[RMDB]
RNA sequence: GGGAACGACUCGAGUAGAGUCGAAAACGAUCAGUACGUUCGCGUACUGAUCGAAGCUACUGGAGACAGUAGCAAGUCUAAGACCUUGUUAUGGGGAAACAAGGAAAAAUGGAGGAAGGACGGACCUCCAUACUUAGACAACCUCAAACCGUCCAAACCUAAAUAGCGACUUCGGUCGCUAUUUAGGAAAAGAAACAACAACAACAAC
Reactivity to 2A3 in 0.01 (KOAc 150mM, MgCl2 10mM, bicine 150mM(pH8.5), 24C), signal-to-noise 4, nucleotides 027 to 156: c010g000a000u000c000a000g000u000a000c010g020u020u080c280g000c010g120u000a000c000u000g000a000u000c000g000a000a000g000c000u000a000c000u000g010g020a040g010a050c000a000g000u000a000g000c010a010a020g000u000c000u010a010a030g020a190c000c000u010u000g010u020u040a220u290g020g000g000g010a010a000a000c010a000a000g000g000a060a090a060a040a000u030g000g010a020g030g010a070a250g010g000a010c020g020g050a110c000c000u000c000c000a010u010a010c000u010u000a000g000a000c020a040a120c040c050u160c100a020a010a010c000c000g000u000c000c000a020a000a010